[RMDB]
Chemical mapping of a 177-nucleotide RNA with 2A3 and DMS. The DMS profile rests on 5,126 reads. For 2A3 the reverse transcriptase was SuperScript II with manganese. Conditions: 150 mM KOAc, 10 mM MgCl2 and 150 mM bicine (pH 8.5), 24 C. The 2A3 profile rests on 4,943 reads. For DMS the reverse transcriptase was MarathonRT.

RNA sequence: GGGAACGACUCGAGUAGAGUCGAAAAGAGUAUCACUGUGCCACCCCAGAACAACUGGCAAUCAUGGGGAAGAUCCACAGAUUCUCAGAAAACCUGCGGGUGGUAGCCAUGACAGCGACACCGGCAGGCAAAUAAUUCUCUUCGGAGAAUUAUUUGCAAAAGAAACAACAACAACAAC
Reactivity to 2A3 in 0.01 (KOAc 150mM, MgCl2 10mM, bicine 150mM(pH8.5), 24C), signal-to-noise 3, nucleotides 027 to 126: g040a010g030u100a040u130c040a020c120u030g010u030g040c000c000a030c010c000c010c000a000g030a060a020c040a050a090c090u100g070g000c030a010a050u070c060a120u030g000g000g020g030a050a070g060a090u080c020c000a020c010a010g020a040u040u010c000u000c000a010g090a050a130a020a040c000c000u000g000c110g080g000g000u030g000g010u010a000g000c000c000a130u180g060a100c040a050g010c000g020a010c000a010c050c020g110g020c020a010g020
Reactivity to DMS in 0.01 (KOAc 150mM, MgCl2 10mM, bicine 150mM(pH8.5), 24C), signal-to-noise 6, nucleotides 027 to 126: g010a110g020u010a040u010c080a090c070u000g000u000g010c230c060a090c010c000c000c010a030g010a070a090c170a130a140c080u000g010g010c160a100a050u000c060a130u000g010g000g000g010a120a110g010a110u000c120c010a030c030a050g000a120u000u010c010u000c020a110g010a100a090a110a220c130c000u000g010c060g000g010g010u000g010g010u010a070g020c060c060a090u010g010a110c160a070g010c010g010a110c030a020c010c010g000g010c050a040g000